The record gives the reactivity of an RNA of 177 nucleotides to DMS and 2A3. The 2A3 profile rests on 680 reads.
RNA sequence: GGGAACGACUCGAGUAGAGUCGAAAAUGGUGUAGGUUUUACAUUGACAUGUAUAGUGGGAUUAACAGAAUGCUCUAGUUUCAUGACCUCUAUUAAGGUAUGUGACAUGGCUAUGUGUUAUGGAGCCCCAGUACUUUUCCUUCGGGAAAAGUACUGGAAAAGAAACAACAACAACAAC
Reactivity to DMS in 0.01 (KOAc 150mM, MgCl2 10mM, bicine 150mM(pH8.5), 24C), signal-to-noise 2, nucleotides 027 to 126: u010g010g010u000g000u000a030g010g010u010u010u000u000a060c050a060u010u010g010a090c120a060u000g010u010a040u000a040g000u010g020g010g010a100u000u010a020a050c060a090g000a120a110u000g020c040u000c040u000a110g010u000u020u000c030a030u000g000a070c010c010u000c220u010a190u000u000a080a060g010g000u000a040u000g030u000g000a070c120a080u000g010g020c020u000a090u000g010u010g010u000u010a040u020g000g000a190g010c070c060
Reactivity to 2A3 in 0.01 (KOAc 150mM, MgCl2 10mM, bicine 150mM(pH8.5), 24C), signal-to-noise 1, nucleotides 027 to 126: u070g020g000u050g040u100a040g050g040u040u120u070u040a010c030a050u020u190g040a020c000a030u100g090u110a020u010a130g090u160g030g110g030a020u060u070a030a050c010a080g130a140a050u060g040c000u000c000u060a060g020u020u040u040c030a040u080g160a140c020c000u060c010u110a300u200u180a100a040g060g000u000a020u100g060u020g030a020c010a050u090g020g000c000u090a090u160g090u000g020u030u070a060u080g050g070a010g010c020c040

Conditions: 150 mM KOAc, 10 mM MgCl2 and 150 mM bicine (pH 8.5), 24 C. For DMS, 1,425 sequencing reads were counted. For DMS the reverse transcriptase was MarathonRT.